[RMDB]
RNA sequence: GGGAACGACUCGAGUAGAGUCGAAAAGUCUUGGCUUUGAUGACCGAUAGCGACUGAAUUGGAAAUUUCACUCUGUUGAUUAUGUAUGUUGUGCUCUAAACGACCAAUUUGUUGCUCAACUUUGUGACUAAUGAGGACGAUUCGUCGUCCUCAUUAGAAAAGAAACAACAACAACAAC
Reactivity to 2A3 in 0.01 (KOAc 150mM, MgCl2 10mM, bicine 150mM(pH8.5), 24C), signal-to-noise 2, nucleotides 027 to 126: g000u020c030u060u110g030g040c010u100u120u130g110a090u100g090a090c010c010g080a110u080a050g040c050g020a020c060u130g050a030a070u050u020g060g070a060a000a180u040u070u030c000a000c010u070c040u070g080u140u060g080a080u000u220a120u180g060u020a110u090g050u070u040g050u080g010c020u000c010u050a110a130a020c030g060a040c020c010a020a010u010u020u070g040u020u050g000c010u030c010a020a050c000u040u110u090g090u050g040a060
Reactivity to DMS in 0.01 (KOAc 150mM, MgCl2 10mM, bicine 150mM(pH8.5), 24C), signal-to-noise 5, nucleotides 027 to 126: g020u000c050u010u000g000g010c020u010u000u010g010a110u000g000a160c050c020g010a120u010a070g010c060g020a040c040u010g020a040a050u000u000g010g000a070a110a130u000u000u010c030a040c030u000c060u010g010u000u000g010a080u010u000a080u010g020u010a040u010g000u000u000g020u000g010c190u000c080u010a040a050a100c130g010a190c030c030a030a050u010u000u000g010u000u000g010c070u000c140a070a050c070u010u000u000g010u010g020a160